[RMDB]
RNA sequence: GGGAACGACUCGAGUAGAGUCGAAAAAGCCGCAAAAAUAGCCGCUAAUCAGCGGGUAAAUCACCACAUGGAAUGAUAAAUCAACGCAUUAAAUCACAUUGGUAUUUGCCAGAGAUUAUAAAAGGCACCUUUUAUUUUAGUUCGCUAAAAUAAAAGGAAAAGAAACAACAACAACAAC
Reactivity to DMS in 0.01 (KOAc 150mM, MgCl2 10mM, bicine 150mM(pH8.5), 24C), signal-to-noise 3, nucleotides 027 to 126: a140g010c000c020g040c280a020a060a060a100a110u000a100g000c010c030g010c150u000a040a010u000c060a090g020c210g000g000g010u000a000a010a030u000c100a020c020c000a000c220a010u010g000g000a020a020u010g000a020u010a020a030a010u000c010a120a140c240g010c150a000u000u000a030a010a020u000c000a040c010a010u000u000g000g010u000a040u000u000u000g020c000c010a050g010a300g000a010u000u000a010u000a080a020a090a210g000g010c010a150
Reactivity to 2A3 in 0.01 (KOAc 150mM, MgCl2 10mM, bicine 150mM(pH8.5), 24C), signal-to-noise 1, nucleotides 027 to 126: a000g110c050c020g010c140a010a100a050a000a050u110a060g030c010c000g000c030u010a000a040u030c030a050g200c040g040g000g030u010a000a010a000u060c040a000c010c010a030c050a120u020g000g030a010a030u100g020a010u050a030a020a020u030c040a080a280c170g010c070a030u020u050a010a100a040u000c000a020c000a040u020u020g000g000u000a000u010u010u010g000c010c020a000g000a000g000a040u030u080a130u170a120a110a030a020g020g000c010a030
The record gives the reactivity of an RNA of 177 nucleotides to DMS and 2A3. 2A3 adducts were read by reverse transcription with SuperScript II with manganese. The data come from the RNA Mapping Database (RMDB), library OK2TST. Values cover nucleotides 27 to 126. For 2A3, 2,249 sequencing reads were counted. Conditions: 150 mM KOAc, 10 mM MgCl2 and 150 mM bicine (pH 8.5), 24 C.